RNA sequence: GGGAACGACUCGAGUAGAGUCGAAAAAGCGCGCAAUGUGUACAUGGGUAUUCCCCCAUAUCUGUGUACUACAGCCGAGAGGACUUGUGGGGUGUUGUGUGCAGUGCUAGUGUAUUUGGUGCGCGAAGUGUAUAUAUAAUUUCGAUUAUAUAUACACAAAAGAAACAACAACAACAAC
Reactivity to 2A3 in 0.01 (KOAc 150mM, MgCl2 10mM, bicine 150mM(pH8.5), 24C), signal-to-noise 1, nucleotides 027 to 126: a010g030c030g000c000g000c030a000a080u070g000u020g020u030a000c000a000u010g010g010g000u010a010u060u110c000c020c000c010c000a000u000a000u000c000u010g010u010g010u010a000c030u120a030c000a020g030c010c030g060a050g030a030g040g010a020c030u040u050g030u080g010g030g000g020u040g000u000u100g000u000g000u020g000c040a060g000u010g000c030u090a070g000u000g090u150a080u050u110u080g040g010u050g020c010g000c010g020a090a000